Notes:
An RNA of 207 nucleotides, treated with 2A3 and DMS and read out base by base.
RNA sequence: GGGAACGACUCGAGUAGAGUCGAAAAGGUCAUCCUUCACAGGAUCGUGUGGAAGUCCUGCUCGGGGCGGAAGCAGUAAAACCAUUCGAGCUAGUCAAUGCGUGGCGUGUCUCUCCGCAGCGUGUUGUGUAUGAGAGUGGAUUCGUCCACUCUCAAAUUAGAUUUGGUGAUUCGUCACCAAAUCUAAAAAAGAAACAACAACAACAAC
Reactivity to 2A3 in 0.01 (KOAc 150mM, MgCl2 10mM, bicine 150mM(pH8.5), 24C), signal-to-noise 3, nucleotides 027 to 156: g070g010u080c020a030u040c010c000u110u100c080a050c050a080g090g030a090u090c080g040u010g000u040g060g000a090a030g060u080c000c020u020g040c040u050c040g030g000g040g030c020g040g020a020a010g000c040a020g060u180a000a050a030a050c030c000a020u050u090c040g020a020g030c070u080a040g190u110c040a030a050u050g010c020g030u030g030g010c040g030u050g040u010c030u000c010u000c070c010g010c020a060g040c030g010u020g020u000u010g010u010g030u010a060u110g020a010g000a010g000u000g010g000a000u020u070c180g050u030c030c000a000c000u000c000u000c000a010a010a000
Reactivity to DMS in 0.01 (KOAc 150mM, MgCl2 10mM, bicine 150mM(pH8.5), 24C), signal-to-noise 3, nucleotides 027 to 156: g000g000u000c030a110u000c040c030u000u060c100a110c100a190g010g010a040u000c050g010u000g020u010g010g000a180a150g030u000c050c000u000g020c050u000c060g050g030g000g000c040g010g010a190a110g060c060a060g000u000a080a050a070a150c030c000a070u010u000c030g020a070g040c050u000a100g030u000c030a070a070u000g030c040g010u000g020g040c020g040u000g000u000c040u000c040u010c060c030g010c010a060g000c030g030u000g030u010u000g080u000g010u000a100u010g020a050g010a040g030u000g010g000a050u000u010c300g000u000c000c000a020c000u010c000u010c000a000a010a060

For DMS, 6,044 sequencing reads were counted.